The record gives the reactivity of an RNA of 177 nucleotides to DMS and 2A3. It was measured as part of the RMDB library TTRDES. The RNA was probed in 150 mM KOAc, 10 mM MgCl2 and 150 mM bicine (pH 8.5) at 24 C. For DMS the reverse transcriptase was MarathonRT.

[RMDB]
RNA sequence: GGGAACGACUCGAGUAGAGUCGAAAAGAUAUGGAAGGUCAUAUCAGCUUGGACCUACGGUCGGAAACGACCGUAGCUAGCUGCGUAUACCUUCCUAAGUCAAAAGUCAAGACUUCGGUCUUGACAACGUAUAAGGCUUGUUCGCAAGCCUUAUACGAAAAGAAACAACAACAACAAC
Reactivity to DMS in 0.01 (KOAc 150mM, MgCl2 10mM, bicine 150mM(pH8.5), 24C), signal-to-noise 6, nucleotides 027 to 126: g010a020u000a300u000g010g010a010a000g000g000u000c160a060u010a060u010c000a000g010c010u000u010g020g000a090c300c000u000a000c000g000g000u000c010g000g000a080a080a150c000g010a010c000c000g000u000a000g010c030u000a000g010c010u000g030c300g000u000a080u000a030c000c000u000u000c000c000u000a010a090g000u010c050a090a090a140a140g000u000c000a000a000g000a020c000u000u010c260g030g010u000c000u000u000g010a000c000a030a060
Reactivity to 2A3 in 0.01 (KOAc 150mM, MgCl2 10mM, bicine 150mM(pH8.5), 24C), signal-to-noise 5, nucleotides 027 to 126: g010a020u060a020u120g000g000a000a020g020g000u130c150a030u050a090u190c000a030g020c010u240u300g090g050a160c020c000u000a000c000g000g000u000c000g000g020a040a060a050c000g000a000c000c000g000u010a000g010c010u000a000g010c010u020g010c030g030u100a050u030a170c000c000u000u000c000c000u000a060a010g030u000c020a050a090a080a060g000u000c010a000a000g010a010c000u070u200c300g120g000u000c000u000u000g000a010c000a000a000